Chemical mapping of a 177-nucleotide RNA with DMS and 2A3. 2A3 adducts were read by reverse transcription with SuperScript II with manganese.

[RMDB]
RNA sequence: GGGAACGACUCGAGUAGAGUCGAAAAGCUGGUCCGGCUUGGCCCCAGCGAACACUUGACGAACGGGUAGUCCCGUCUUGUGGAUUAGGACGUUCUAGGUCCGGUCUGGCCCCUAGUUCGUCCGAAAGAGCCCAUGAUAGUUCGCUAUCAUGGGCUCAAAAGAAACAACAACAACAAC
Reactivity to DMS in 0.01 (KOAc 150mM, MgCl2 10mM, bicine 150mM(pH8.5), 24C), signal-to-noise 2, nucleotides 027 to 126: g000c010u000g020g040u020c220c030g080g000c020u040u000g000g000c060c030c000c090a110g000c180g000a030a080c100a020c030u000u000g000a100c130g050a200a080c040g000g010g000u010a170g010u000c080c000c020g000u020c050u000u090g020u000g000g000a190u020u010a100g000g040a000c000g000u000u000c000u000a000g010g020u050c010c060g000g010u010c130u060g010g000c150c210c000c000u000a040g000u000u000c000g000u000c000c000g100a000a040a070
Reactivity to 2A3 in 0.01 (KOAc 150mM, MgCl2 10mM, bicine 150mM(pH8.5), 24C), signal-to-noise 3, nucleotides 027 to 126: g000c000u020g000g050u120c060c030g010g110c080u050u080g120g020c010c010c020c000a000g050c030g060a050a040c030a000c030u070u080g090a000c060g080a150a070c050g000g130g000u140a020g140u160c020c000c000g000u020c060u040u030g000u020g050g050a080u000u110a060g000g000a000c000g010u000u010c000u000a010g000g000u030c060c020g100g160u170c280u250g110g000c060c060c010c000u000a000g000u000u000c000g000u000c000c000g050a030a030a040

The reactions ran in a buffer of 150 mM KOAc, 10 mM MgCl2 and 150 mM bicine (pH 8.5), at 24 C.